The record gives the reactivity of an RNA of 177 nucleotides to DMS and 2A3. Source: RMDB library M2PK50, as collected in RNAgym. As a SHAPE reagent, 2A3 marks flexible, mostly unpaired nucleotides at the ribose 2'-OH. The reactions ran in a buffer of 150 mM KOAc, 10 mM MgCl2 and 150 mM bicine (pH 8.5), at 24 C.
[RMDB]
RNA sequence: GGGAACGACUCGAGUAGAGUCGAAAACGAUUAGCAUUCGUGCUAAUCGAAUCAGGUAGUACCUAUCUCUAUUACCUCUAGUGGCCAACGUCCGGACAGAGAAUCGAGUCCUGUUCGCAGGACUCAAUGCAUAAACCUAUUUCGAUAGGUUUAUGCAAAAAGAAACAACAACAACAAC
Reactivity to DMS in 0.01 (KOAc 150mM, MgCl2 10mM, bicine 150mM(pH8.5), 24C), signal-to-noise 6, nucleotides 027 to 126: c010g000a010u000u000a000g010c000a020u000u010c200g030u000g020c000u000a000a000u000c000g000a060a050u010c110a040g010g000u000a020g010u000a250c090c060u000a110u000c050u000c050u000a050u000u000a030c050c010u000c080u010a070g010u000g010g010c040c040a060a070c140g000u000c030c040g030g010a080c130a080g010a070g010a100a080u010c120g010a020g020u000c000c000u000g010u000u010c160g010c000a020g000g000a010c000u010c010a030a040
Reactivity to 2A3 in 0.01 (KOAc 150mM, MgCl2 10mM, bicine 150mM(pH8.5), 24C), signal-to-noise 6, nucleotides 027 to 126: c000g000a000u000u000a000g000c010a010u010u070c230g100u060g000c000u010a010a000u000c010g000a010a070u110c030a010g060g000u040a030g020u040a080c020c010u070a070u080c050u000c020u050a080u100u130a080c020c000u060c030u060a060g070u070g130g000c030c040a130a060c110g070u030c010c010g030g040a040c030a030g070a010g030a060a070u170c110g000a000g000u000c010c000u000g030u030u040c220g010c040a000g010g000a000c000u000c010a000a010